[RMDB]
Source information: An RNA of 207 nucleotides, treated with 2A3 and DMS and read out base by base. The RNA was probed in 150 mM KOAc, 10 mM MgCl2 and 150 mM bicine (pH 8.5) at 24 C. Reactivities are given for positions 27 through 156. The data come from the RNA Mapping Database (RMDB), library OK3TST. For DMS, 1,366 sequencing reads were counted.
RNA sequence: GGGAACGACUCGAGUAGAGUCGAAAAAUGGGAAAAUAAAAAGUGACCUGUAAUACACAUAAAGAAAAGUAUAUCAGAGAUAAAAUGUUAUGACUUCAGUAUUGACCAGGACAUGAUAAAUAGGGGACACAUGUUCCCACUGUGUGUAUUAACUCUAGUCAGUAAAUUAUUUCGAUAAUUUACUGACAAAAGAAACAACAACAACAAC
Reactivity to 2A3 in 0.01 (KOAc 150mM, MgCl2 10mM, bicine 150mM(pH8.5), 24C), signal-to-noise 3, nucleotides 027 to 156: a010u080g020g020g030a050a060a060a090u250a040a140a070a030a030g050u030g030a050c000c010u030g020u040a030a010u040a010c010a000c000a030u190a110a150a040g060a070a160a030a000g030u040a020u010a020u090c020a020g030a010g040a140u090a210a140a070a030u090g010u060u050a050u100g080a040c050u050u010c080a040g020u030a060u110u130g030a040c050c020a010g010g020a030c000a030u080g000a030u170a090a110a020u110a100g010g000g010g030a000c030a000c010a060u160g020u040u010c000c010c000a030c020u010g000u000g010u000g010u020a080u050u110a100a060c010u070c020u120a040
Reactivity to DMS in 0.01 (KOAc 150mM, MgCl2 10mM, bicine 150mM(pH8.5), 24C), signal-to-noise 1, nucleotides 027 to 156: a130u000g000g000g020a070a100a100a090u020a040a050a110a210a150g010u010g000a110c020c020u000g010u000a030a130u000a010c030a050c010a060u000a070a060a170g000a100a040a070a150g000u010a060u000a050u010c030a140g000a240g020a220u000a040a080a040a050u010g000u010u020a060u000g000a090c050u000u010c020a050g010u000a090u000u000g000a050c180c060a070g000g000a070c080a070u000g030a060u000a000a030a080u020a130g020g000g020g020a110c010a060c190a060u000g020u000u000c000c000c010a120c290u000g000u000g040u000g010u050a060u010u010a070a170c030u000c020u000a300